[RMDB]
RNA sequence: GGGAACGACUCGAGUAGAGUCGAAAAUCCGGCCCCAGUUACGGAUGACCGAGGCGCCGCCGAAGAGGGUUGGCUGGAUCGCAAGCAUAUAGAAGCGCCGCAUGUUCUGCGUCGUAUCGAUGCGGUGCCCAUCCGAGGAGUUCGCUCCUCGGAUGGGAAAAGAAACAACAACAACAAC
Reactivity to DMS in 0.01 (KOAc 150mM, MgCl2 10mM, bicine 150mM(pH8.5), 24C), signal-to-noise 2, nucleotides 027 to 126: u000c000c000g000g000c000c040c000c020a100g050u010u000a100c080g030g000a070u050g000a090c070c040g020a090g000g030c100g000c030c030g000c050c000g010a090a090g020a090g030g000g010u000u040g030g020c070u010g000g000a090u010c150g020c110a090a080g000c020a070u010a100u030a040g030a120a300g000c020g000c000c000g020c040a020u040g020u010u070c070u020g020c020g000u010c020g000u000a100u010c030g000a060u000g010c020g000g000u030g020
Reactivity to 2A3 in 0.01 (KOAc 150mM, MgCl2 10mM, bicine 150mM(pH8.5), 24C), signal-to-noise 3, nucleotides 027 to 126: u000c000c000g000g020c040c000c000c000a070g030u100u110a060c080g070g040a090u040g040a040c030c040g020a040g000g060c040g000c010c000g060c000c000g060a110a040g070a090g070g100g010u110u170g040g000c020u010g040g000a070u070c070g010c110a090a040g030c100a120u170a010u010a230g150a100a010g030c000g000c040c000g010c020a020u070g010u110u070c060u070g000c010g020u060c010g030u090a050u100c090g030a010u020g010c000g000g020u040g000
An RNA of 177 nucleotides, treated with DMS and 2A3 and read out base by base.
2A3 adducts were read by reverse transcription with SuperScript II with manganese.
For DMS, 2,031 sequencing reads were counted.